Background: This 177-nucleotide RNA was probed chemically with 2A3 and DMS. The DMS profile rests on 36,127 reads. Conditions: 150 mM KOAc, 10 mM MgCl2 and 150 mM bicine (pH 8.5), 24 C.
RNA sequence: GGGAACGACUCGAGUAGAGUCGAAAACGACUUUUUGAUUUUGGAUAGGUUCAGACUUCGUGUGUCCUUUAUGUUUUUUUCUGAAACGUAAUGAAGGGGUGCCAAAACAAAGGGUGGUUCGAAGCUGCGAUAAGAUUUCAUUCGUGAAAUUUUAUCGAAAAGAAACAACAACAACAAC
Reactivity to 2A3 in 0.01 (KOAc 150mM, MgCl2 10mM, bicine 150mM(pH8.5), 24C), signal-to-noise 5, nucleotides 027 to 126: c010g020a000c010u020u030u000u040u030g100a120u010u020u020u020g030g020a030u030a110g090g000u070u070c030a010g030a060c020u020u030c050g040u030g020u020g030u060c010c000u010u020u010a050u010g040u000u000u000u000u010u010u060c060u070g040a010a010a000c010g030u060a020a030u090g050a090a040g040g010g020g020u050g040c000c010a010a030a000a020c020a010a010a010g020g000g000u030g030g020u010u010c020g020a020a010g020c040u050g010
Reactivity to DMS in 0.01 (KOAc 150mM, MgCl2 10mM, bicine 150mM(pH8.5), 24C), signal-to-noise 7, nucleotides 027 to 126: c030g000a040c030u000u010u010u000u010g000a120u010u000u000u000g000g000a090u030a070g000g020u010u010c060a090g000a100c020u000u000c040g010u020g020u010g000u000c030c010u010u000u020a020u010g000u000u000u010u000u020u030u030c200u030g010a020a010a000c040g020u010a030a030u020g010a060a050g010g000g000g010u010g000c010c020a010a010a020a030c040a000a020a040g000g000g020u000g000g010u000u000c060g010a060a090g020c070u010g010
For 2A3, 15,221 sequencing reads were counted. The data come from the RNA Mapping Database (RMDB), library OK1LIB.